An RNA of 207 nucleotides, treated with DMS and 2A3 and read out base by base. The DMS profile rests on 2,490 reads. 2A3 adducts were read by reverse transcription with SuperScript II with manganese. For DMS the reverse transcriptase was MarathonRT. It was measured as part of the RMDB library OK3TST. The RNA was probed in 150 mM KOAc, 10 mM MgCl2 and 150 mM bicine (pH 8.5) at 24 C. The 2A3 profile rests on 4,811 reads.
[RMDB]
RNA sequence: GGGAACGACUCGAGUAGAGUCGAAAAGCCCUGUGCCGGCCAGGAAGCGGAUGAACAGGGAAUAGUGCGGGUCGAUCCGCUCCGAGAGCGUGACCAAGUCGUCAGGCGACAGAUAGACGGCUUCCCGCGCCUCGUUCAGGUCGGCCUCGGCAACUCCGUACCUUCCAAUUUUCGAAUUGGAAGGUACAAAAGAAACAACAACAACAAC
Reactivity to DMS in 0.01 (KOAc 150mM, MgCl2 10mM, bicine 150mM(pH8.5), 24C), signal-to-noise 1, nucleotides 027 to 156: g030c000c000c000u000g000u010g030c010c000g010g040c080c020a190g030g000a080a120g050c050g090g020a080u000g010a030a060c040a070g010g040g020a100a160u000a100g010u030g000c000g000g020g030u000c060g020a030u000c000c000g000c010u000c030c020g010a080g000a170g010c000g030u000g000a150c030c010a040a030g030u000c000g030u000c030a190g020g010c010g040a230c210a090g010a150u000a110g000a060c010g040g000c000u000u010c010c000c060g040c010g030c040c000u060c020g020u000u010c030a130g060g020u000c000g040g000c030c000u010c040g010g020c000a100a080c000u000c010c210
Reactivity to 2A3 in 0.01 (KOAc 150mM, MgCl2 10mM, bicine 150mM(pH8.5), 24C), signal-to-noise 5, nucleotides 027 to 156: g000c010c000c000u010g060u140g000c000c010g020g000c020c000a030g060g050a110a030g040c040g020g010a050u040g060a050a040c050a080g080g040g090a030a110u180a080g120u120g080c070g040g020g040u030c040g060a050u010c000c000g000c000u020c020c040g030a050g010a010g000c020g010u050g000a070c070c090a010a000g010u010c000g000u000c020a050g090g190c080g090a050c050a050g100a060u210a080g000a000c000g000g020c000u010u020c020c040c010g000c000g020c010c000u000c010g020u070u110c050a030g000g000u000c000g000g000c000c000u000c000g000g000c000a010a090c020u020c030c020